[RMDB]
RNA sequence: GGGAACGACUCGAGUAGAGUCGAAAAGCUGUACGCUUCGGCGUACAGCAAAUAAAAUCAGCGGUUAAAAUGCAGGCGUUAUAACCGCUGAACGCCUGCUUAAAAGUACUACCUUCGGGUAGUACAAGUAAAUCCUUAAGUUCGCUUAAGGAUUUACAAAAGAAACAACAACAACAAC
Reactivity to DMS in 0.01 (KOAc 150mM, MgCl2 10mM, bicine 150mM(pH8.5), 24C), signal-to-noise 3, nucleotides 027 to 126: g020c010u010g000u000a010c010g050c000u000u020c160g030g020c010g020u010a010c000a030g020c010a000a020a050u010a080a070a090a080u000c020a020g020c000g010g000u000u000a020a060a060a040u000g030c060a130g010g020c020g040u000u000a050u000a010a060c020c010g010c010u010g000a010a020c120g010c000c010u010g010c130u010u010a040a080a160a120g010u000a010c000u000a000c000c000u000u010c190g030g000g010u000a000g020u000a000c000a030a090
Reactivity to 2A3 in 0.01 (KOAc 150mM, MgCl2 10mM, bicine 150mM(pH8.5), 24C), signal-to-noise 3, nucleotides 027 to 126: g010c000u000g010u000a000c000g000c010u040u100c260g130g010c000g010u000a000c000a000g010c000a000a000a010u010a000a020a010a030u030c000a000g010c000g030g030u050u070a080a110a050a030u110g040c060a050g200g020c030g020u020u020a030u020a110a010c000c000g000c000u000g000a000a000c010g030c000c010u030g020c020u080u130a080a130a040a040g000u010a000c000u010a000c020c000u020u130c190g040g000g000u000a010g000u010a000c000a000a010